[RMDB]
RNA sequence: GGGAACGACUCGAGUAGAGUCGAAAAGGUCUUGGGUAUAGGUUUGUGUGCGUUCCUGACUUUGCUCUUCUAUUAUAUUAAUAAAGUAAAACGUGCUUUUGCAGAUUACACCCAGUGUGCUGUAAUUAUACACCCCAGUUCGCUGGGGUGAAAAGAAACAACAACAACAAC
Reactivity to 2A3 in 0.01 (KOAc 150mM, MgCl2 10mM, bicine 150mM(pH8.5), 24C), signal-to-noise 4, nucleotides 027 to 129: g060g010u020c000u010u040g020g000g010u090a060u030a090g020g100u010u030u110g150u020g040u030g050c010g000u000u030c000c010u010g000a040c000u070u030u050g050c000u030c000u040u170c040u080a120u140u140a080u130a100u260u090a130a190u160a100a130a010g090u040a070a060a040a020c030g010u040g030c000u020u060u050u060g010c000a000g010a020u000u150a010c030a010c040c080c040a030g020u030g010u000g130c030u020g040u020a040a010u090u050a040u050a070
Reactivity to DMS in 0.01 (KOAc 150mM, MgCl2 10mM, bicine 150mM(pH8.5), 24C), signal-to-noise 3, nucleotides 027 to 129: g050g040u020c030u020u030g000g000g000u030a000u050a050g000g000u030u030u040g030u000g010u010g000c060g030u040u060c000c000u030g000a070c060u060u040u030g010c000u050c010u010u000c050u040a050u040u020a060u040a070u000u050a090a080u020a060a050a070g000u000a060a060a070a070c090g000u000g010c050u030u020u040u010g020c040a030g030a070u070u000a070c080a000c010c000c000a000g000u000g010u000g000c050u020g010u030a000a080u040u080a130u000a190
Record summary
Structure probing data (2A3 and DMS) for a 170-nucleotide construct. 2A3 adducts were read by reverse transcription with SuperScript II with manganese. For 2A3, 4,528 sequencing reads were counted. The RNA was probed in 150 mM KOAc, 10 mM MgCl2 and 150 mM bicine (pH 8.5) at 24 C. It was measured as part of the RMDB library 15KLIB.